[RMDB]
RNA sequence: GGGAACGACUCGAGUAGAGUCGAAAAUGGAAAAACCUGUUGAAAAAGGCUCAAAAAGUGGAUAACUUGCUGGGAUCAAGGUUAAAACUGGGUUUUUCGGAUGUUUUCCUAAGUAUUAAUACUUCAUAUACGAUACUUUGUUCGCAAAGUAUCGUAUAAAAGAAACAACAACAACAAC
Reactivity to DMS in 0.01 (KOAc 150mM, MgCl2 10mM, bicine 150mM(pH8.5), 24C), signal-to-noise 3, nucleotides 027 to 126: u040g000g020a020a030a000a010a000c030c000u000g010u000u010g000a070a080a080a120a120g020g000c010u000c020a000a030a240a020a000g010u000g000g060a150u050a040a010c000u000u000g010c300u000g000g000g000a060u010c020a040a070g020g030u010u030a050a060a050a020c020u070g020g010g000u000u000u000u000u000c010g020g040a090u020g000u010u010u000u000c000c000u000a010a020g000u000a070u030u020a090a090u010a010c000u000u000c090a090u010
Reactivity to 2A3 in 0.01 (KOAc 150mM, MgCl2 10mM, bicine 150mM(pH8.5), 24C), signal-to-noise 5, nucleotides 027 to 126: u100g020g020a010a000a000a000a000c010c010u030g030u010u030g060a010a020a010a040a040g070g000c020u010c020a030a040a000a000a000g030u050g060g100a140u090a260a050c020u000u020g000c030u030g010g050g060a180u110c030a070a050g120g020u030u080a050a090a000a010c080u080g000g020g000u000u000u000u000u010c000g070g090a060u080g060u040u060u010u010c000c000u000a060a000g030u010a090u240u140a190a090u080a090c010u020u040c050a000u000
The record gives the reactivity of an RNA of 177 nucleotides to DMS and 2A3. 2A3 adducts were read by reverse transcription with SuperScript II with manganese. In probing experiments dimethyl sulfate is read out at A N1 and C N3, which are open when not base-paired. Reactivities are given for positions 27 through 126. Conditions: 150 mM KOAc, 10 mM MgCl2 and 150 mM bicine (pH 8.5), 24 C.